[RMDB]
RNA sequence: GGGAACGACUCGAGUAGAGUCGAAAAAAUUAGAGGCAAUUUGAAAUAAUUUAAAUUAGCUCAACACUACUGCACUUACCGAACUAGAUAACGGUGUAGUAGGGGUAAAUUCUCCGCAUUCGGUGCGCAACCACCUGAGGUUUCGACCUCAGGUGAACUAGUACCAACGAUUCGUCGUUGGUACUAGAAAAGAAACAACAACAACAAC
Reactivity to DMS in 0.01 (KOAc 150mM, MgCl2 10mM, bicine 150mM(pH8.5), 24C), signal-to-noise 1, nucleotides 027 to 156: a120a050u000u000a080g020a200g010g000c000a060a010u000u000u000g020a100a120a250u000a120a140u000u010u000a060a000a050u000u000a190g000c050u020c000a110a030c000a010c000u000a010c000u020g050c000a000c000u010u000a030c020c000g010a170a160c200u000a090g040a100u000a020a110c170g010g030u000g020u010a030g000u000a020g000g000g010g030u010a010a030a140u000u000c040u000c050c040g020c020a280u000u000c060g010g040u010g000c050g000c150a070a130c120c010a010c000c000u000g000a030g020g000u000u000u000c270g000a030c000c000u000c000a000g010g010u000g000a010a010
Reactivity to 2A3 in 0.01 (KOAc 150mM, MgCl2 10mM, bicine 150mM(pH8.5), 24C), signal-to-noise 2, nucleotides 027 to 156: a000a000u130u100a020g000a040g090g030c040a010a000u040u000u020g040a080a090a090u260a130a260u140u060u080a010a040a030u010u020a060g020c000u020c030a000a090c030a010c020u000a000c000u000g000c020a020c020u050u050a030c030c010g080a100a030c050u020a070g040a210u120a240a090c080g020g020u000g010u010a010g010u000a000g010g010g000g020u030a060a070a030u070u030c060u050c020c040g010c030a030u070u070c090g080g000u030g000c030g000c060a080a050c040c010a010c000c000u000g000a000g010g030u010u050u120c150g050a030c000c000u000c000a000g000g000u000g000a010a000